[RMDB]
RNA sequence: GGGAACGACUCGAGUAGAGUCGAAAACUAAGUCAGUUAUGGAUCACGAGCAAUCCAUGUAUGAACUGUUAAAGGGCUGUGGUUCAUUGGCUUCACAUGAUUUCUUUACAUGGCGUGAGGGUAGGUCUGCUAAUAAUCACUUCGGUGAUUAUUAGCAAAAAGAAACAACAACAACAAC
Reactivity to 2A3 in 0.01 (KOAc 150mM, MgCl2 10mM, bicine 150mM(pH8.5), 24C), signal-to-noise 3, nucleotides 027 to 126: c010u020a010a000g040u010c000a020g020u130u210a030u050g030g000a010u010c020a010c170g140a060g020c040a060a040u010c010c020a020u050g050u050a140u100g110a130a060c040u060g080u160u270a140a100a050g060g020g000c020u020g000u010g030g000u010u030c010a020u040u040g010g000c010u020u070c060a080c010a070u110g040a170u090u100u000c020u040u090u040a070c030a070u080g060g010c020g040u040g020a040g000g030g000u050a020g040g010u010c030
Reactivity to DMS in 0.01 (KOAc 150mM, MgCl2 10mM, bicine 150mM(pH8.5), 24C), signal-to-noise 6, nucleotides 027 to 126: c040u010a050a030g010u010c010a060g010u000u010a060u000g000g000a010u000c030a070c070g010a080g000c050a100a060u000c030c020a060u010g010u010a080u010g010a070a080c070u000g000u000u010a080a100a100g020g000g010c030u000g010u000g010g020u000u000c030a040u000u000g020g000c010u000u000c130a060c150a080u010g000a110u010u000u000c040u000u000u000a090c080a070u000g000g000c080g020u010g000a120g000g010g000u000a030g010g000u010c080
Annotation: The record gives the reactivity of an RNA of 177 nucleotides to 2A3 and DMS. DMS (dimethyl sulfate) methylates the pairing face of unpaired adenines and cytosines. For DMS the reverse transcriptase was MarathonRT. For 2A3 the reverse transcriptase was SuperScript II with manganese. The RNA was probed in 150 mM KOAc, 10 mM MgCl2 and 150 mM bicine (pH 8.5) at 24 C.